[RMDB]
RNA sequence: GGGAACGACUCGAGUAGAGUCGAAAACUCAAUGGAAGGAACCAGUUACAUCCGAUGUUCCACCAAUUGGAUAUGAAAUUUAUUAUGUCCGAGGAGACAAAAGUGUUGAGGAAGAUGAUUCAGCUGGGAAGUGGCAUAUAUUCGUAUAUGCCACUUCAAAAGAAACAACAACAACAAC
Reactivity to 2A3 in 0.01 (KOAc 150mM, MgCl2 10mM, bicine 150mM(pH8.5), 24C), signal-to-noise 2, nucleotides 027 to 126: c020u010c010a030a100u160g080g050a090a130g100g010a040a090c000c010a030g060u080u090a060c030a050u040c030c030g020a060u060g070u070u030c020c020a060c020c010a020a120u070u020g000g000a010u010a050u090g050a040a080a050u210u220u150a150u110u070a020u050g000u000c000c000g040a040g030g020a120g020a010c060a000a140a040a070g130u100g020u150u140g020a010g020g010a010a040g030a060u060g000a040u070u030c030a030g000c020u090g000g070
Reactivity to DMS in 0.01 (KOAc 150mM, MgCl2 10mM, bicine 150mM(pH8.5), 24C), signal-to-noise 6, nucleotides 027 to 126: c020u000c030a110a110u010g000g000a130a080g010g010a080a250c030c040a040g000u000u000a120c130a040u000c010c030g000a210u020g000u000u000c020c010a150c080c030a100a110u000u000g010g000a020u000a020u000g010a030a150a140u010u010u010a070u020u000a050u000g020u000c000c010g010a060g010g000a130g010a070c100a060a070a070a060g020u010g010u000u000g010a080g010g000a060a040g010a060u000g000a100u000u010c090a050g000c040u000g000g010